Source: RMDB library RFMREP, as collected in RNAgym. The record gives the reactivity of an RNA of 177 nucleotides to DMS.
RNA sequence: GGGAACGACUCGAGUAGAGUCGAAAACAGAACUGGAUGGGCCGUGUGCUUAACCAGGACAAGAUCUCCUUCUCUCCAACGUUGUUGCCAACUCAUGAUUCUCCUAACCUGUGCUUGGAGAGACGUGGUGAAGUAAUUGGUUCGCCAAUUACUUCACAAAAGAAACAACAACAACAAC
Reactivity to DMS in 0.01 (KOAc 150mM, MgCl2 10mM, bicine 150mM(pH8.5), 24C), signal-to-noise 1, nucleotides 027 to 126: c130a190g000a080a170c000u010g000g030a140u000g020g000g010c000c020g030u000g040u010g000c020u000u000a050a100c010c010a060g050g010a080c080a080a080g000a180u000c030u000c010c010u000u000c040u000c010u000c020c000a060a080c070g020u000u000g020u010u000g000c050c040a070a190c180u010c020a010u010g000a140u000u000c010u010c020c070u020a050a090c110c150u000g000u000g040c060u040u000g000g040a000g000a040g000a020c180g020u010g010

About this RNA:
The DMS profile rests on 744 reads.